[RMDB]
RNA sequence: GGGAACGACUCGAGUAGAGUCGAAAAAAAACAGCUUCCCUGAAAAGAAAGAAAACUCUUAAUUCAAACCUACCAGAUAGCUGAUUUAUGAAAGUGAAAAUGCUGGCAUGUAUAGAUAUUGGGAAGUACCAAUCAGUUAUUUCGAUAACUGAUUGGUAAAAGAAACAACAACAACAAC
Reactivity to 2A3 in 0.01 (KOAc 150mM, MgCl2 10mM, bicine 150mM(pH8.5), 24C), signal-to-noise 3, nucleotides 027 to 126: a000a000a010a020c020a030g000c000u000u010c000c000c000u000g050a190a140a010a010g050a050a050a040g110a030a150a040a040c080u090c010u110u050a100a110u230u010c010a080a100a080c020c010u020a030c030c010a010g010a040u060a020g000c030u040g060a100u050u220u090a150u170g090a150a110a000g020u020g030a120a050a050a050u140g020c010u020g010g030c010a050u060g050u040a020u050a110g080a050u060a030u100u030g000g000g000a000a000g020u020
Reactivity to DMS in 0.01 (KOAc 150mM, MgCl2 10mM, bicine 150mM(pH8.5), 24C), signal-to-noise 3, nucleotides 027 to 126: a050a030a010a050c140a130g000c040u000u000c000c010c000u000g000a200a050a060a060g020a080a030a100g010a160a050a100a100c250u020c030u000u000a110a080u000u000c020a080a130a040c160c040u000a090c060c030a010g000a040u000a120g020c010u000g000a130u030u010u020a070u050g000a060a060a020g020u000g000a020a050a080a060u020g000c000u000g000g010c060a040u010g000u000a080u010a100g020a020u000a060u010u000g000g000g030a010a030g020u000
The record gives the reactivity of an RNA of 177 nucleotides to 2A3 and DMS. The data come from the RNA Mapping Database (RMDB), libraries RFM100 and RFMREP. Values cover nucleotides 27 to 126.